[RMDB]
RNA sequence: GGGAACGACUCGAGUAGAGUCGAAAACAUUUCAGUCAGGGCCGCCGUAAUUAGCUAUGUGCACUUCAGGUUGCUGGCAUUCUAAUUCGAGGGCAGUGAAGGGCGCGGGGUUCGUCGCAUGGCAAACUCCACGCUGAAGGUUCGCCUUCAGCGUGGAAAAAGAAACAACAACAACAAC
Reactivity to DMS in 0.01 (KOAc 150mM, MgCl2 10mM, bicine 150mM(pH8.5), 24C), signal-to-noise 1, nucleotides 027 to 126: c140a080u010u050u020c060a140g010u010c060a030g020g000g000c000c060g030c060c010g000u020a010a080u040u020a080g000c160u000a020u020g050u000g000c000a090c070u000u020c210a040g000g010u000u030g000c050u000g000g010c070a090u000u000c010u000a000a130u000u000c070g000a010g010g000g020c000a070g040u120g000a090a070g010g000g000c010g040c000g010g000g000g000u010u020c060g000u000c000g000c210a020u000g020g060c000a130a010a030c100
Reactivity to 2A3 in 0.01 (KOAc 150mM, MgCl2 10mM, bicine 150mM(pH8.5), 24C), signal-to-noise 1, nucleotides 027 to 126: c020a100u050u200u180c080a040g010u050c020a010g040g090g000c010c030g050c000c010g000u030a040a040u080u110a030g050c060u040a010u090g070u080g000c010a040c030u070u080c030a020g120g000u060u090g000c040u010g040g000c020a000u030u000c020u000a090a140u070u020c020g050a070g000g000g050c120a100g010u040g150a020a080g020g000g000c070g000c000g040g020g000g000u050u000c030g020u000c000g000c050a020u190g010g000c000a010a020a020c000